[RMDB]
RNA sequence: GGGAACGACUCGAGUAGAGUCGAAAAGCCGUUACUGCAGCACGGAUUCUUUGCAGACGACCUAACGCUACUUGCGAGGCACACAGAAAGGGAUGUCAUCAACCACACACUACAAUGCGGCCUAAACUCACUUACCCCGUUUCGACGGGGUAAGUGAAAAAGAAACAACAACAACAAC
Reactivity to 2A3 in 0.01 (KOAc 150mM, MgCl2 10mM, bicine 150mM(pH8.5), 24C), signal-to-noise 3, nucleotides 027 to 126: g050c000c010g030u020u100a050c020u040g030c020a090g000c040a020c030g060g000a010u050u080c050u060u170u100g050c020a010g010a110c030g040a070c020c050u050a060a040c040g000c060u130a060c040u110u140g000c030g080a050g010g010c040a000c000a000c000a010g210a060a070a050g130g000g010a040u060g050u020c040a030u040c010a040a040c010c000a000c010a010c000a000c080u100a030c050a040a110u070g000c000g010g020c000c000u060a070a060a060c020
Reactivity to DMS in 0.01 (KOAc 150mM, MgCl2 10mM, bicine 150mM(pH8.5), 24C), signal-to-noise 1, nucleotides 027 to 126: g000c000c000g000u000u020a000c070u000g000c020a000g000c100a000c010g000g000a210u000u020c020u000u030u020g020c170a120g000a110c020g000a100c000c000u000a210a000c070g080c000u000a060c100u000u030g010c000g000a090g000g040c180a120c030a120c060a000g000a270a050a030g000g000g000a000u030g030u010c000a060u000c120a050a160c010c010a090c150a030c110a130c080u000a020c030a000a120u000g010c000g000g020c040c000u000a060a010a030c140